[RMDB]
RNA sequence: GGGAACGACUCGAGUAGAGUCGAAAAGGAACAACUGCGAGCAAAUAGAGAUAAUUUAAAUCCAGCACAGAAGCAUCAGCUGGAACAGUUAGAAAGUCAGUUUGUCUUAAUGCAGCAAAUGAGACACAAAGAAGUUGCUCAGGUACGAACUACUGGAUCAUCAAAAUCAGUUCGCUGAUUUUGAUGAAAAAGAAACAACAACAACAAC
Reactivity to DMS in 0.01 (KOAc 150mM, MgCl2 10mM, bicine 150mM(pH8.5), 24C), signal-to-noise 2, nucleotides 027 to 156: g020g020a130a070c080a060a090c030u000g000c110g010a080g000c010a050a040a100u000a050g010a170g000a140u030a070a130u000u000u030a040a120a120u000c000c000a050g000c010a190c070a200g040a040a140g000c100a150u000c130a070g020c030u030g040g030a060a040c070a100g010u000u010a120g010a040a050a090g010u000c000a050g020u000u000u000g010u000c020u000u010a050a070u000g010c040a080g020c030a040a010a060u000g010a150g010a050c040a100c120a040a030a140g000a030a180g000u010u010g000c000u020c050a050g020g020u000a100c020g000a090a140c040u010a070c030u000g000g000a300
Reactivity to 2A3 in 0.01 (KOAc 150mM, MgCl2 10mM, bicine 150mM(pH8.5), 24C), signal-to-noise 3, nucleotides 027 to 156: g060g000a090a020c040a030a030c050u060g010c090g010a000g040c020a020a070a040u100a100g060a010g020a070u100a150a090u080u050u140a050a050a050u020c010c000a010g060c030a100c030a090g150a190a000g050c010a060u110c050a010g000c010u000g000g000a000a020c000a000g030u020u040a020g040a080a040a010g000u040c080a000g010u000u050u090g030u010c020u070u070a090a060u130g020c020a000g000c020a050a030a060u060g020a070g000a050c030a020c020a070a070a020g150a070a010g070u070u020g030c000u020c030a020g000g020u040a030c090g030a120a020c040u090a060c010u130g010g030a050
Structure probing data (DMS and 2A3) for a 207-nucleotide construct.